[RMDB]
RNA sequence: GGGAACGACUCGAGUAGAGUCGAAAACUGAGUCAGUGACACACAGUCUGACUCACACAGACUGAGUCUGUGUGUCUGUGUGUCUCUCAGAGUGAGUGUGAGAGUCUCUCUGACUGAGUGACAGACAAUUGGCUCAGGGAUUCGUCCCUGAGCCAAUAAAAGAAACAACAACAACAAC
Reactivity to 2A3 in 0.01 (KOAc 150mM, MgCl2 10mM, bicine 150mM(pH8.5), 24C), signal-to-noise 1, nucleotides 027 to 126: c010u020g000a010g030u020c020a020g040u010g100a020c000a010c000a000c000a030g000u000c060u150g100a140c000u040c000a020c000a020c030a010g100a050c030u300g100a020g110u000c000u000g000u000g000u000g000u000c010u000g000u000g000u000g000u030c010u000c000u000c010a060g040a010g060u100g090a080g050u150g000u070g080a120g020a030g160u050c010u010c000u000c010u070g070a060c010u040g090a030g040u020g040a030c030a000g150a040c070a040
Reactivity to DMS in 0.01 (KOAc 150mM, MgCl2 10mM, bicine 150mM(pH8.5), 24C), signal-to-noise 2, nucleotides 027 to 126: c010u000g000a080g010u000c010a040g010u010g000a070c010a020c000a000c010a000g070u010c150u010g020a090c190u020c040a000c010a050c050a030g020a070c080u040g020a130g010u000c010u010g030u000g030u010g000u010c030u000g030u000g000u000g010u010c020u020c000u000c010a030g010a090g020u000g000a030g020u020g010u010g020a140g010a150g030u000c030u000c010u010c010u010g000a060c060u000g000a080g020u000g000a020c090a100g000a120c210a140
Chemical mapping of a 177-nucleotide RNA with 2A3 and DMS. 2A3 adducts were read by reverse transcription with SuperScript II with manganese. For DMS, 1,637 sequencing reads were counted.